The record gives the reactivity of an RNA of 207 nucleotides to 2A3.
Conditions: 150 mM KOAc, 10 mM MgCl2 and 150 mM bicine (pH 8.5), 24 C.
The data come from the RNA Mapping Database (RMDB), library VIROID.
[RMDB]
RNA sequence: GGGAACGACUCGAGUAGAGUCGAAAACUGACUUCGCGCGCGGCGGCGAGAAAUUACCUCCGACCCGGGGGGGAUCGCCUUCCUCCACAAAGUUGGCGCCGCUUCCUAUAAACUCAAUUGAGAAUAAAGGAGCAAUGGCGUCAACAAGCGAGGCAAGGGGCAACGCGUGCUUCGGCACGCGUUGCCCAAAAGAAACAACAACAACAAC
Reactivity to 2A3 in 0.01 (KOAc 150mM, MgCl2 10mM, bicine 150mM(pH8.5), 24C), signal-to-noise 2, nucleotides 027 to 156: c020u020g060a050c000u040u050c100g020c000g000c000g020c020g170g010c090g000g000c000g000a040g180a030a040a030u180u160a080c000c000u040c050c010g180a290c070c010c050g000g000g000g000g030g020g000a020u050c030g110c010c000u040u030c010c000u010c010c000a050c050a120a070a000g000u010u010g000g000c000g010c000c000g000c030u100u030c020c010u010a050u030a150a050a020c000u000c010a200a300u300u300g000a000g010a060a030u060a080a070a000g010g000a000g000c020a010a120u240g000g010c000g010u000c000a000a000c000a000a000g000c050g010a010g000g000c010a010a040g040